[RMDB]
RNA sequence: GGGAACGACUCGAGUAGAGUCGAAAAUAAAAGAAUUUUUUUGGACAUGAAUACAAAGAUGUCAGGUUACCAAAUCAUUUGCUAGUAGAUCCUAACAAUAUCACCUAUAGGAAACUGAACGUAGCCUUUAAACAUUAAGUGAUGAUAAUGGAUUUGACUCAUUAGUGACUUUCGAGUCACUAAUGAGAAAAGAAACAACAACAACAAC
Reactivity to DMS in 0.01 (KOAc 150mM, MgCl2 10mM, bicine 150mM(pH8.5), 24C), signal-to-noise 1, nucleotides 027 to 156: u020a040a030a090a270g000a090a010u030u030u000u030u030u030u000g020g050a110c080a080u000g000a110a140u000a190c060a030a110a200g010a010u000g000u000c040a020g020g020u000u030a050c070c000a090a110a110u020c030a070u000u000u020g000c010u020a140g090u020a020g040a030u000c020c010u000a110a140c070a080a080u010a110u000c010a030c000c020u000a090u000a120g070g010a070a030a070c040u000g030a030a240c140g000u000a010g040c000c000u000u010u000a000a050a050c070a080u000u000a050a170g000u000g000a030u000g010a090u000a050a100u000g030g010a160u000u000u010g000a240
Reactivity to 2A3 in 0.01 (KOAc 150mM, MgCl2 10mM, bicine 150mM(pH8.5), 24C), signal-to-noise 2, nucleotides 027 to 156: u080a000a090a000a040g070a010a000u080u030u050u020u050u140u110g040g000a010c020a040u020g100a090a050u060a120c040a030a100a030g020a040u010g030u000c000a010g050g000u010u040a020c000c010a020a020a050u060c030a060u060u110u150g070c020u040a040g020u050a010g030a070u010c000c020u030a030a080c020a080a060u060a020u150c030a020c060c000u080a080u050a180g000g060a140a060a000c040u070g020a010a030c070g000u000a010g010c000c020u040u080u120a120a090a000c010a050u120u080a090a000g010u030g080a020u000g010a010u130a070a060u100g060g020a030u020u050u070g030a030